[RMDB]
RNA sequence: GGGAACGACUCGAGUAGAGUCGAAAAAGAUGGGACAAUCAGCAAUGUCUUCAGCCAUUGCCAGGGGACAGAAUCAUCCUCGAUUGAAAGCAUCUGGUCUAAGGGGAAAGACCAGUGUGGAAGUCAGGAGCGAACUAUAAUUCGUUAUAGUUCGCUCAAAAGAAACAACAACAACAAC
Reactivity to DMS in 0.01 (KOAc 150mM, MgCl2 10mM, bicine 150mM(pH8.5), 24C), signal-to-noise 4, nucleotides 027 to 126: a090g010a100u000g000g020g010a120c150a090a080u010c090a180g020c030a050a030u010g000u000c030u010u010c150a100g010c060c020a010u000u000g000c010c080a160g000g010g000g000a050c140a080g000a080a080u010c100a120u000c010c020u010c080g010a050u000u020g000a120a120a140g020c010a020u040c010u000g000g010u010c010u020a060a060g030g020g000g000a150a050a020g000a010c010c000a000g000u000g010u000g000g010a120a050g000u010c070a120g030
Reactivity to 2A3 in 0.01 (KOAc 150mM, MgCl2 10mM, bicine 150mM(pH8.5), 24C), signal-to-noise 9, nucleotides 027 to 126: a010g090a050u110g010g010g040a040c050a050a090u090c020a050g030c030a030a050u040g020u020c020u180u110c110a040g020c030c010a030u020u050g030c020c050a070g010g010g000g010a020c030a060g170a120a060u120c040a050u040c040c030u050c070g050a050u010u100g070a040a030a000g030c010a030u130c020u010g000g000u000c000u050a080a160g070g010g000g020a030a100a000g000a000c000c000a000g000u010g010u020g020g070a060a030g050u050c050a060g060

This 177-nucleotide RNA was probed chemically with DMS and 2A3.
For DMS the reverse transcriptase was MarathonRT.
The DMS profile rests on 6,274 reads.
Values cover nucleotides 27 to 126.
For 2A3, 16,975 sequencing reads were counted.
The RNA was probed in 150 mM KOAc, 10 mM MgCl2 and 150 mM bicine (pH 8.5) at 24 C.
It was measured as part of the RMDB library OK1LIB.